Chemical mapping of a 177-nucleotide RNA with DMS.
The reactions ran in a buffer of 150 mM KOAc, 10 mM MgCl2 and 150 mM bicine (pH 8.5), at 24 C.
DMS adducts were read by reverse transcription with MarathonRT.
The data come from the RNA Mapping Database (RMDB), library M2PK50.
Values cover nucleotides 27 to 126.
RNA sequence: GGGAACGACUCGAGUAGAGUCGAAAACCCUCACUCUUCGGAGUGAGGGAAAUCUGAUUCCCAAUAGCAGGGUAUCCGGGCUAAGACGGAUAGGCGUUGCCAAAAGAUCUGGCUUCGGCCAGAUCAACACUAAGAGGUCGUUCGCGACCUCUUAGUGAAAAGAAACAACAACAACAAC
Reactivity to DMS in 0.01 (KOAc 150mM, MgCl2 10mM, bicine 150mM(pH8.5), 24C), signal-to-noise 2, nucleotides 027 to 126: c010c000c000u000c010a020c000u020c030u000u010c180g040g030a020g020u010g000a020g000g000g010a010a000a030u010c120u010g000a230u000u000c000c000c010a110a120u000a100g010c020a070g000g010g020u000a030u000c010c030g000g000g020c090u020a080a080g010a070c030g010g010a040u000a010g010g000c040g010u000u000g010c000c130a080a140a140a090g020a010u000c000u000g000g000c000u000u000c140g020g010c000c000a010g000a000u000c000a040a120